[RMDB]
RNA sequence: GGGAACGACUCGAGUAGAGUCGAAAAGAAAGAAAGAAAAGAAAGAUGUGUUCUUUAGCUCUUUUGUAAUUAAAUCUGGAUGUACCUCAAGACUCUUAAGACUGUGGUGAUAAGAGGCUUUUCUCAACCUAAGUGCUCCCUUCGGGGAGCACUUAGGAAAAGAAACAACAACAACAAC
Reactivity to 2A3 in 0.01 (KOAc 150mM, MgCl2 10mM, bicine 150mM(pH8.5), 24C), signal-to-noise 1, nucleotides 027 to 126: g070a000a010a000g100a060a060a000g140a030a060a040a000g190a000a000a060g120a220u220g060u030g000u070u120c140u110u090u000a060g000c000u020c060u210u000u090u150g060u070a000a070u000u060a020a020a020u060c060u010g030g030a000u190g290u130a010c000c000u000c050a090a000g030a200c000u000c050u000u000a130a000g120a300c100u000g070u290g270g000u040g090a000u000a190a030g000a000g030g000c000u000u000u000u000c000u000c030a160a220

Notes
Chemical mapping of a 177-nucleotide RNA with 2A3. Reactivities are given for positions 27 through 126. 2A3 adducts were read by reverse transcription with SuperScript II with manganese. It was measured as part of the RMDB library RFM100.